The record gives the reactivity of an RNA of 177 nucleotides to 2A3 and DMS.
The data come from the RNA Mapping Database (RMDB), library OK2TRN.
The reactions ran in a buffer of 150 mM KOAc, 10 mM MgCl2 and 150 mM bicine (pH 8.5), at 24 C.
2A3 adducts were read by reverse transcription with SuperScript II with manganese.
[RMDB]
RNA sequence: GGGAACGACUCGAGUAGAGUCGAAAAGCUCUUUUGGUAGCCUGUUCCAACUGGACCUGCUUUCCACAUUCGUCCAUAGAGCCCUGCAGACGAUUUGUUUUCGGCGUACAUUUGACGUCAUCAUCAAGAUGAGCUAAUUAUUCGUAAUUAGCUCAUCAAAAGAAACAACAACAACAAC
Reactivity to 2A3 in 0.01 (KOAc 150mM, MgCl2 10mM, bicine 150mM(pH8.5), 24C), signal-to-noise 4, nucleotides 027 to 126: g010c010u020c000u050u160u090u060g080g020u060a010g010c000c010u010g060u050u040c030c010a060a080c100u110g030g020a050c010c010u020g010c030u060u080u040c030c000a050c000a110u090u050c030g030u030c030c010a030u090a050g080a030g050c000c000c010u030g000c020a040g000a070c030g040a070u060u100u120g090u040u040u040u060c050g020g030c010g030u080a070c080a220u090u090u260g050a020c030g040u010c020a060u050c010a040u050c040a070a020
Reactivity to DMS in 0.01 (KOAc 150mM, MgCl2 10mM, bicine 150mM(pH8.5), 24C), signal-to-noise 9, nucleotides 027 to 126: g010c030u000c010u000u000u000u000g010g030u000a050g010c030c030u000g020u000u000c040c030a130a120c140u010g000g000a080c050c020u000g010c050u000u000u000c030c040a090c120a100u000u000c060g010u010c020c040a070u000a090g010a120g000c020c020c030u000g020c080a080g010a060c040g000a070u000u000u000g010u010u000u000u000c070g000g000c020g000u000a120c090a170u000u000u000g010a050c090g010u000c020a090u000c100a080u000c110a080a160